This 207-nucleotide RNA was probed chemically with 2A3 and DMS. For 2A3 the reverse transcriptase was SuperScript II with manganese. For DMS, 3,070 sequencing reads were counted. The reactions ran in a buffer of 150 mM KOAc, 10 mM MgCl2 and 150 mM bicine (pH 8.5), at 24 C.
RNA sequence: GGGAACGACUCGAGUAGAGUCGAAAAAUGUGCAAAAAUCCUGGCCUCAAAGGGCCACUUAUCUGCUAGUAUAGAGGGACAGACAAAUAAGUACAAUAUAUGCAUAUAUGAGAUUGAGGAGGGGCUGGGCAUGGUGGCUCACACCUGUAAUCCUAGACUAUCACUAGUGAUUCGUCACUAGUGAUAGAAAAGAAACAACAACAACAAC
Reactivity to 2A3 in 0.01 (KOAc 150mM, MgCl2 10mM, bicine 150mM(pH8.5), 24C), signal-to-noise 6, nucleotides 027 to 156: a000u080g010u040g010c020a060a010a020a000a130u060c020c040u050g010g000c000c020u130c120a130a110a090g030g000g000c000c000a010c000u040u050a050u020c040u020g030c040u040a040g050u060a140u080a120g070a050g010g000g010a020c020a050g040a030c020a020a090a020u070a080a020g040u060a050c030a090a020u080a010u030a020u180g020c020a010u050a000u020a050u160g040a030g020a090u070u100g020a020g010g030a030g000g000g010g000c020u030g010g010g000c020a020u070g020g000u020g050g000c020u040c030a060c000a020c010c010u020g040u080a030a030u040c010c020u020a040g050a060
Reactivity to DMS in 0.01 (KOAc 150mM, MgCl2 10mM, bicine 150mM(pH8.5), 24C), signal-to-noise 2, nucleotides 027 to 156: a100u010g050u010g030c040a030a010a130a130a050u000c040c030u020g050g040c010c000u000c070a080a240a170g000g000g000c010c000a020c030u010u000a040u010c040u000g020c010u000a110g040u000a190u010a100g000a130g010g020g000a090c100a120g000a060c070a030a020a070u000a030a030g020u000a050c060a030a060u000a120u000a100u010g010c030a060u000a020u000a110u020g000a150g000a140u000u010g010a100g020g000a130g060g000g000g040c040u010g000g000g030c000a020u010g000g080u010g010g000c060u000c020a040c030a010c040c020u000g000u000a070a090u000c000c010u000a040g010a300